An RNA of 177 nucleotides, treated with DMS and 2A3 and read out base by base. For DMS, 2,332 sequencing reads were counted. Reactivities are rounded to 0.1 and cut off at 0 and 3. For 2A3, 5,299 sequencing reads were counted. It was measured as part of the RMDB library TTRDES.
RNA sequence: GGGAACGACUCGAGUAGAGUCGAAAAGAUAUGGACCUAUCAUGUUUCACGAAGAACAGCUUCGGAAACGAAGCUGGGAGUGGCACAUGAGUAGGUCCUAAGUCAAAUCCUGAGUUCGCUCAGGAAAGAUGACCUAAAACUUCGGUUUUAGGUCAUCAAAAGAAACAACAACAACAAC
Reactivity to DMS in 0.01 (KOAc 150mM, MgCl2 10mM, bicine 150mM(pH8.5), 24C), signal-to-noise 2, nucleotides 027 to 126: g010a060u000a300u010g000g010a010c000c000u000a020u000c000a000u000g010u000u000u010c000a000c030g000a150a270g000a110a200c010a010g000c010u000u000c000g010g000a110a080a230c000g000a000a010g010c000u000g000g000g000a090g040u000g020g010c130a020c000a010u000g010a070g020u000a000g000g010u000c000c010u000a010a060g020u000c070a110a180a130u010c000c000u000g000a030g020u010u000c250g000c000u000c020a010g000g000a020a020a140
Reactivity to 2A3 in 0.01 (KOAc 150mM, MgCl2 10mM, bicine 150mM(pH8.5), 24C), signal-to-noise 2, nucleotides 027 to 126: g020a010u050a050u200g010g000a000c000c000u010a000u010c000a020u010g040u010u050u010c090a070c090g230a300a130g000a090a030c010a000g010c000u000u010c000g010g030a050a070a070c030g010a000a000g000c010u000g010g000g020a040g000u010g000g020c040a000c010a010u010g020a030g110u040a010g010g000u000c000c000u010a050a000g000u000c010a000a040a120u030c000c010u020g000a010g000u030u150c300g020c110u000c000a000g000g000a030a010a020